[RMDB]
RNA sequence: GGGAACGACUCGAGUAGAGUCGAAAAUAAAGCAUAGAAUGAGACAACUGAUAUCUGAGCUCAGACAAAUGCCGGCAAUGUGUGAAAUAACAAUCCUUGACACGAGAUCUUGUAUUAUCCUGAUCGGCAGUACUUUUCCUUUCGAGGAAAAGUACUGAAAAGAAACAACAACAACAAC
Reactivity to 2A3 in 0.01 (KOAc 150mM, MgCl2 10mM, bicine 150mM(pH8.5), 24C), signal-to-noise 6, nucleotides 027 to 126: u160a020a070a030g050c060a040u070a100g070a110a110u100g020a030g030a060c030a090a070c170u120g030a130u060a080u210c070u080g040a010g030c010u010c030a010g010a050c050a000a150a020u050g000c000c000g060g000c060a110a130u040g030u040g000u060g120a140a040a060u170a090a060c070a020a030u040c010c020u000u080g050a010c000a010c080g100a070g010a070u010c010u020u040g060u070a150u200u060a070u120c010c010u040g030a080u010c000g030g000
Reactivity to DMS in 0.01 (KOAc 150mM, MgCl2 10mM, bicine 150mM(pH8.5), 24C), signal-to-noise 4, nucleotides 027 to 126: u030a070a090a150g000c030a040u030a120g000a080a190u000g020a030g020a130c080a070a130c090u020g010a100u030a070u040c060u020g010a120g020c030u000c030a030g010a190c110a040a060a030u010g040c000c010g000g010c090a070a060u030g000u010g010u010g020a040a040a030u010a080a070c150a030a030u020c020c030u020u010g020a080c060a040c060g000a080g000a050u000c060u010u020g010u010a050u010u030a040u000c010c010u010g020a090u020c030g000g000